Chemical mapping of a 207-nucleotide RNA with DMS and 2A3. For 2A3 the reverse transcriptase was SuperScript II with manganese. Reactivities are given for positions 27 through 156. For DMS the reverse transcriptase was MarathonRT. For DMS, 2,001 sequencing reads were counted.
RNA sequence: GGGAACGACUCGAGUAGAGUCGAAAAUACCGCAGGCCUGCGGUGCGGCAGUGUGGAGACCUGCCGUAAGCCGUGUUGUUUUGACAACCGGGAGAAAGCGUAUGCGGAGGGAGCGCUUUCAGGGUCUAAAAGUAUGGGAUCUUCGGAUCCCAUACAAGAUAUUGAACCUGUUCGCAGGUUCAAUAUCAAAAGAAACAACAACAACAAC
Reactivity to DMS in 0.01 (KOAc 150mM, MgCl2 10mM, bicine 150mM(pH8.5), 24C), signal-to-noise 1, nucleotides 027 to 156: u020a120c000c020g010c060a090g040g020c020c040u000g000c000g040g030u000g030c050g010g050c030a020g010u000g030u000g000g000a190g000a170c150c020u010g010c000c020g020u000a020a100g060c010c010g020u000g000u010u020g010u000u010u020u010g000a090c050a010a030c030c000g000g050g030a160g000a030a020a030g030c010g030u000a070u000g000c030g030g010a110g010g010g030a290g010c060g000c010u000u000u000c000a050g010g060g000u010c020u010a030a100a060a220g010u010a010u000g010g000g020a050u010c000u020u020c300g040g020a020u000c020c000c000a000u000a000c010a060a080
Reactivity to 2A3 in 0.01 (KOAc 150mM, MgCl2 10mM, bicine 150mM(pH8.5), 24C), signal-to-noise 5, nucleotides 027 to 156: u080a010c000c000g000c010a010g000g020c000c030u020g000c000g000g000u000g000c000g010g020c000a010g000u040g010u080g220g040a050g030a060c000c010u000g000c000c000g000u010a010a000g030c010c020g110u130g010u140u000g010u010u100u110u300g120a010c000a000a000c000c000g000g000g000a010g000a000a010a000g010c000g010u050a050u230g110c090g020g020a030g050g030g000a030g000c000g000c000u000u000u010c000a000g010g000g000u010c000u010a040a050a040a020g000u000a000u000g000g000g010a000u000c000u020u050c180g050g000a000u000c010c000c000a000u000a000c000a000a000